[RMDB]
RNA sequence: GGGAACGACUCGAGUAGAGUCGAAAAGAAAUUACGUUUCCUUUACACUUCUCAAACCGGGAUCAAGAGAAGCAGAGCAUCCCUCAUAUCCACGAUGGAGGGUGUCGUGGAGUAUACUGUACCAAAAAGAGCGAACACGGCUUCGGCCGUGUUCGAAGAGUAUCCAGUAGUUCGCUACUGGAUACUCAAAAGAAACAACAACAACAAC
Reactivity to 2A3 in 0.01 (KOAc 150mM, MgCl2 10mM, bicine 150mM(pH8.5), 24C), signal-to-noise 4, nucleotides 027 to 156: g050a010a070a020u220u140a050c060g000u000u020u060c010c000u040u040u050a070c060a020c030u080u050c010u030c040a140a170a140c070c070g090g010g030a070u070c060a180a020g000a010g010a040a000g010c040a010g000a010g030c010a040u050c010c020c000u040c030a060u070a060u090c030c010a020c030g020a010u030g080g070a040g050g030g010u060g010u020c010g000u000g010g030a020g010u000a010u020a050c090u070g080u100a070c020c050a040a080a050a040a070g130a030g060c010g000a000a000c000a000c000g010g000c000u030u060c160g040g000c000c000g010u000g000u000u000c000g000a000a000
Reactivity to DMS in 0.01 (KOAc 150mM, MgCl2 10mM, bicine 150mM(pH8.5), 24C), signal-to-noise 1, nucleotides 027 to 156: g010a090a080a110u000u020a140c090g000u000u000u000c020c010u010u000u010a220c060a090c030u010u010c010u000c000a080a080a140c040c070g010g000g010a080u000c100a100a300g010a100g000a070a020g020c030a080g010a190g010c080a100u000c000c020c000u030c060a130u000a080u000c020c070a030c050g000a060u000g000g000a080g000g020g000u010g040u000c030g000u000g000g050a050g000u000a070u010a050c050u010g030u000a160c030c000a040a060a080a120a070g000a200g000c040g000a060a020c000a040c020g040g030c010u000u000c300g050g000c030c000g030u000g000u000u010c010g000a000a010